[RMDB]
RNA sequence: GGGAACGACUCGAGUAGAGUCGAAAAAGCGAUGAUACGUCAUCGCAACGAUUGCCUGAUCGUAAAACAGGAGACGGCCGUGGCCGCGACUACGUAAAAAAGCGUAACGUGGUCUACGGACCACGAAAAAAGCGCGGAACGUUCGCGUUCCGCGCAAGUUCCCAUUAAUCUUCGGAUUAAUGGGAACAAAAGAAACAACAACAACAAC
Reactivity to 2A3 in 0.01 (KOAc 150mM, MgCl2 10mM, bicine 150mM(pH8.5), 24C), signal-to-noise 2, nucleotides 027 to 156: a000g000c000g000a010u000g010a000u030a060c140g060u010c000a000u000c000g020c010a000a040c010g000a000u010u010g010c010c000u000g000a010u020c030g150u210a000a040a000a000c000a000g010g000a010g100a060c150g010g000c020c010g000u010g000g010c000c010g010c020g140a120c050u000a000c020g030u070a020a230a110a090a030a000g030c000g000u000a000a010c010g000u000g000g000u000c010u060a010c010g000g040a000c010c000a040c040g080a130a000a030a030a000a020g010c020g000c000g000g000a000a000c000g040u100u080c090g030c000g100u000u000c000c000g000c000g010c000a000a010